RNA sequence: GGGAACGACUCGAGUAGAGUCGAAAAUCAUGGUGGUUCGCCACCAUGAACUGUGUAGUCGCUAGAAAACGAUCAAAACUAGCGACUAGACUAACGAUCGAACUGGGGGACAGUUCGCUGUCCCCAAGUACUAACGCUUAUUCGUAAGCGUUAGUACAAAAGAAACAACAACAACAAC
Reactivity to DMS in 0.01 (KOAc 150mM, MgCl2 10mM, bicine 150mM(pH8.5), 24C), signal-to-noise 7, nucleotides 027 to 126: u000c000a010u000g000g030u000g000g010u000u020c220g020c010c000a010c000c000a000u000g000a010a130c130u000g030u000g000u000a000g010u000c000g000c000u000a000g010a080a050a130a110c140g010a110u000c160a080a070a120a140c000u000a010g000c000g000a010c000u000a000g000a020c010u010a080a130c170g010a090u010c080g010a090a100c170u000g010g010g000g010g000a030c000a010g010u000u010c180g010c020u000g010u000c000c000c000c000a000a010
Reactivity to 2A3 in 0.01 (KOAc 150mM, MgCl2 10mM, bicine 150mM(pH8.5), 24C), signal-to-noise 5, nucleotides 027 to 126: u020c000a010u000g000g000u010g000g050u040u040c200g050c050c000a000c000c000a000u010g000a000a020c010u010g000u000g020u030a000g000u000c000g000c010u010a020g060a120a200a040a040c150g120a200u160c100a020a060a030a140c000u000a010g000c010g000a000c000u000a000g000a000c010u020a110a050c060g150a140u300c100g040a100a080c130u180g100g000g000g000g000a000c000a010g010u030u050c200g020c070u010g000u000c000c000c000c000a000a000

Annotation
The record gives the reactivity of an RNA of 177 nucleotides to DMS and 2A3. The 2A3 profile rests on 13,586 reads. The DMS profile rests on 10,111 reads. The reactions ran in a buffer of 150 mM KOAc, 10 mM MgCl2 and 150 mM bicine (pH 8.5), at 24 C.